[RMDB]
RNA sequence: GGGAACGACUCGAGUAGAGUCGAAAAGAUAUGGACGUCUACCCACCCGAAACACCACACUCUUGGAUUUAACGUCGGAAACGACGUUUGUCAGAGUGUGGUGCGAAUCGGAGGACGUCCUAAGUCAGUAUAUCAAAUGCUUCGGCAUUUGAUAUACAAAAGAAACAACAACAACAAC
Reactivity to DMS in 0.01 (KOAc 150mM, MgCl2 10mM, bicine 150mM(pH8.5), 24C), signal-to-noise 3, nucleotides 027 to 126: g030a110u040a170u020g010g000a020c010g020u000c000u000a220c040c010c020a300c170c000c000g000a010a140a110c000a000c000c000a010c010a000c000u000c000u000u010g030g020a000u010u040u000a000a010c000g010u000c000g000g000a100a120a280c010g010a020c000g000u000u000u000g010u000c010a030g030a030g030u000g010u000g000g000u000g000c020g000a130a120u000c000g000g000a170g010g000a020c030g010u000c010c000u000a010a100g010u030c160a240
Reactivity to 2A3 in 0.01 (KOAc 150mM, MgCl2 10mM, bicine 150mM(pH8.5), 24C), signal-to-noise 3, nucleotides 027 to 126: g120a120u230a250u300g010g000a000c010g000u030c010u080a300c020c010c020a030c000c000c000g030a030a120a010c000a000c000c000a010c010a000c010u060c030u150u290g300g000a120u300u300u240a010a000c000g010u010c030g020g040a110a070a060c020g000a000c000g000u010u020u020g000u020c000a000g000a000g000u010g020u010g000g000u000g000c010g030a090a080u000c000g000g000a000g000g010a000c010g000u000c000c000u000a070a010g200u080c150a040
Structure probing data (DMS and 2A3) for a 177-nucleotide construct. DMS adducts were read by reverse transcription with MarathonRT. The reactions ran in a buffer of 150 mM KOAc, 10 mM MgCl2 and 150 mM bicine (pH 8.5), at 24 C. For 2A3 the reverse transcriptase was SuperScript II with manganese. The data come from the RNA Mapping Database (RMDB), library TTRINS.